[RMDB]
RNA sequence: GGGAACGACUCGAGUAGAGUCGAAAAAGAUUCGAAACAUCAGACAGGAUUCGACUGCAUAGAGAAUCUGGUCUAUGUCAAGGUUAUAAGAGUCUGCGAACAGCUAGGAGAUUGUGCAAGUCGAAGAAGUAAUUACUACUUUCGAGUAGUAAUUACUAAAAGAAACAACAACAACAAC
Reactivity to DMS in 0.01 (KOAc 150mM, MgCl2 10mM, bicine 150mM(pH8.5), 24C), signal-to-noise 9, nucleotides 027 to 126: a090g010a090u000u000c030g010a180a130a070c060a020u000c130a040g010a050c050a150g010g010a090u000u000c000g000a120c060u000g010c180a060u010a060g020a300g000a040a040u000c010u000g000g020u000c010u000a030u000g000u000c060a070a140g010g000u000u000a080u010a070a110g010a080g010u000c010u000g010c140g000a050a060c060a060g000c070u000a050g010g010a070g010a110u000u000g020u000g010c040a050a080g010u000c040g010a040a070g010a090
Reactivity to 2A3 in 0.01 (KOAc 150mM, MgCl2 10mM, bicine 150mM(pH8.5), 24C), signal-to-noise 7, nucleotides 027 to 126: a000g060a040u110u100c040g020a080a040a030c020a040u070c050a010g060a060c010a030g090g020a060u020u010c020g100a100c080u090g030c080a080u130a110g100a010g010a070a020u020c010u010g000g030u000c020u030a030u050g010u010c030a040a030g080g020u130u090a090u050a220a060g020a010g070u000c020u030g040c030g020a040a020c020a030g010c010u030a030g040g040a060g040a110u070u120g010u030g020c040a090a000g000u010c020g040a030a020g050a050
The record gives the reactivity of an RNA of 177 nucleotides to DMS and 2A3. It was measured as part of the RMDB library OK2TST. The DMS profile rests on 29,688 reads. Reactivities are given for positions 27 through 126.